[RMDB]
RNA sequence: GGGAACGACUCGAGUAGAGUCGAAAAUUAAAGGAGUGAAGGUACAAGCGACAGUGUCCAACUGAGGUAAUCGACCACUGCCAGUACCAAGACGUGCGUAGUCAACUCAAAGGCAGAACGCUAAAAACAGAGAGACUAGAUUCGUCUAGUCUCUCUGAAAAGAAACAACAACAACAAC
Reactivity to 2A3 in 0.01 (KOAc 150mM, MgCl2 10mM, bicine 150mM(pH8.5), 24C), signal-to-noise 3, nucleotides 027 to 126: u130u070a070a040a030g130g010a070g020u070g060a160a050g070g010u050a020c040a110a060g020c040g100a060c020a020g020u000g050u040c020c050a100a020c100u080g030a020g070g040u110a070a120u110c120g060a040c030c010a010c010u020g030c000c000a010g000u010a020c000c030a000a010g050a010c040g030u120g080c030g010u110a010g010u030c000a010a050c030u040c030a050a010a030g020g000c020a020g040a140a020c000g020c020u070a130a010a000a030a050
Reactivity to DMS in 0.01 (KOAc 150mM, MgCl2 10mM, bicine 150mM(pH8.5), 24C), signal-to-noise 4, nucleotides 027 to 126: u000u010a040a080a140g000g020a080g040u000g000a130a090g010g000u000a010c050a110a090g030c050g000a030c030a030g000u000g000u010c050c080a070a110c100u000g030a110g010g020u000a080a060u000c090g010a100c160c030a050c010u000g010c020c000a090g000u000a030c030c020a070a100g010a040c060g030u010g020c070g010u000a060g010u000c030a060a110c030u000c030a030a100a130g000g000c020a050g010a120a080c030g010c050u000a070a040a030a090a130

Annotation: The record gives the reactivity of an RNA of 177 nucleotides to 2A3 and DMS. For DMS the reverse transcriptase was MarathonRT. In probing experiments dimethyl sulfate is read out at A N1 and C N3, which are open when not base-paired. Values are in units of 0.01, from 0 to 300, in steps of 10.